[RMDB]
RNA sequence: GGGAACGACUCGAGUAGAGUCGAAAACGUAUAGCCGAUCUGCUGACAUCUCGCGAAUCAGGUUGCGCGCCCACUUCCGCGGUUCCUCGCGGUUGUCGUGGUAAAGGAUCAGAUCCAGCGGGCCAUGCGAUACCCAACUUUUCGAAGUUGGGUAUCGAAAAGAAACAACAACAACAAC
Reactivity to DMS in 0.01 (KOAc 150mM, MgCl2 10mM, bicine 150mM(pH8.5), 24C), signal-to-noise 4, nucleotides 027 to 126: c090g000u020a060u010a090g000c000c040g020a030u010c050u010g000c080u000g010a110c130a050u010c030u040c040g010c020g010a080a060u030c090a040g020g010u000u010g000c060g030c210g040c050c000c030a100c010u000u020c010c020g010c020g000g000u010u030c110c090u010c010g010c040g000g000u010u000g010u000c050g010u020g000g000u030a060a130a080g000g000a030u000c100a130g010a300u020c030c040a080g010c100g000g000g010c060c040a120u010g000
Reactivity to 2A3 in 0.01 (KOAc 150mM, MgCl2 10mM, bicine 150mM(pH8.5), 24C), signal-to-noise 7, nucleotides 027 to 126: c030g030u070a040u110a150g040c010c010g030a110u030c030u100g020c020u050g030a030c010a110u030c050u020c030g010c010g020a070a060u100c030a080g070g090u080u130g070c040g000c040g010c010c010c000a010c000u040u020c010c000g010c020g020g050u160u140c020c050u110c050g000c010g010g000u000u020g020u010c020g040u150g020g000u050a090a090a100g040g000a020u060c080a030g050a110u010c020c020a010g040c030g020g020g000c020c010a040u120g020
The record gives the reactivity of an RNA of 177 nucleotides to DMS and 2A3. The data come from the RNA Mapping Database (RMDB), library OK1LIB. For 2A3 the reverse transcriptase was SuperScript II with manganese. The 2A3 profile rests on 6,690 reads. Values are in units of 0.01, from 0 to 300, in steps of 10. The DMS profile rests on 5,520 reads.